[RMDB]
RNA sequence: GGGAACGACUCGAGUAGAGUCGAAAAAGGAUGGUUCGCCAUCCUACCUAACCUUUGUGAACCUAUGAAGUAUGGGUCACAUAUGACGGGCCCAUUGGGCCUACAUAUUAAGCCAUAUGGAGGUUCACUCUGGUAACCAUACUCGUUCGCGAGUAAACACAUACAUGACAUUCGUGUCAUGUAUGUGAAAAGAAACAACAACAACAAC
Reactivity to 2A3 in 0.01 (KOAc 150mM, MgCl2 10mM, bicine 150mM(pH8.5), 24C), signal-to-noise 9, nucleotides 027 to 156: a000g020g000a020u030g010g050u070u100c180g070c080c000a000u000c000c000u030a040c000c000u030a030a060c000c000u020u010u000g010u000g000a010a010c000c010u190a300u300g040a050a010g010u010a000u020g030g030g140u140c050a040c060a030u020a000u000g300a270c200g010g000g000c020c020c080a300u220u300g020g000g000c000c000u010a010c000a000u020a000u020u080a050a010g080c000c000a000u000a000u020g030g020a000g000g000u000u000c000a000c000u000c000u000g000g000u010a040a040c070c030a090u040a090c000u010c010g050u080u070c270g020c020g100a000g000u050a040a130a010
Reactivity to DMS in 0.01 (KOAc 150mM, MgCl2 10mM, bicine 150mM(pH8.5), 24C), signal-to-noise 3, nucleotides 027 to 156: a070g010g000a000u010g020g030u000u000c300g060c020c000a020u000c000c000u000a020c040c000u010a120a120c020c010u000u020u020g010u000g000a030a000c010c020u010a190u010g010a140a300g000u000a050u000g010g020g000u000c010a100c210a020u000a010u000g010a120c080g030g050g050c020c010c010a230u000u010g050g030g020c010c010u000a020c000a030u000a020u010u000a120a120g010c040c020a040u000a010u000g010g010a010g050g030u000u000c010a020c030u000c020u010g010g010u000a070a110c050c030a150u000a030c010u010c030g010u010u000c160g000c060g000a050g030u000a070a080a280